[RMDB]
RNA sequence: GGGAACGACUCGAGUAGAGUCGAAAAGAUAUGGAUUGCGAACUACUCGGUUUGUAAGCGACGAAGACUGAUUAAGUCGGAAACGACUUAAUCAGUCAGAGCUUAUGAUCGAGCGCAAUCCUAAGUCGUUAACGUACCAGUUCGCUGGUACGUUAACAAAAGAAACAACAACAACAAC
Reactivity to DMS in 0.01 (KOAc 150mM, MgCl2 10mM, bicine 150mM(pH8.5), 24C), signal-to-noise 1, nucleotides 027 to 126: g010a040u010a220u000g010g000a010u000u000g010c000g000a060a010c100u050a300c010u010c000g000g010u000u000u030g080u000a000a000g010c000g000a140c300g060a160a170g020a020c000u000g020a000u010u020a020a010g020u010c000g010g010a120a070a140c030g000a000c000u000u010a000a000u000c000a010g010u000c010a060g010a160g010c010u000u000a000u000g000a000u010c000g040a010g020c000g000c000a010a010u000c000c000u010a010a090g020u020c040
Reactivity to 2A3 in 0.01 (KOAc 150mM, MgCl2 10mM, bicine 150mM(pH8.5), 24C), signal-to-noise 1, nucleotides 027 to 126: g060a010u000a030u110g010g000a040u040u010g050c000g050a070a050c040u210a100c020u300c010g040g090u030u100u280g070u040a010a000g010c020g300a300c210g120a300a080g000a000c010u000g000a000u000u000a000a000g000u030c010g000g000a060a040a000c040g000a000c000u000u000a000a000u020c000a000g000u000c000a000g000a000g000c000u000u000a000u060g040a000u020c010g030a010g000c010g000c000a010a020u010c000c000u000a020a000g050u040c010

Annotation
Source: RMDB library TTRINS, as collected in RNAgym. Chemical mapping of a 177-nucleotide RNA with DMS and 2A3. The DMS profile rests on 1,177 reads.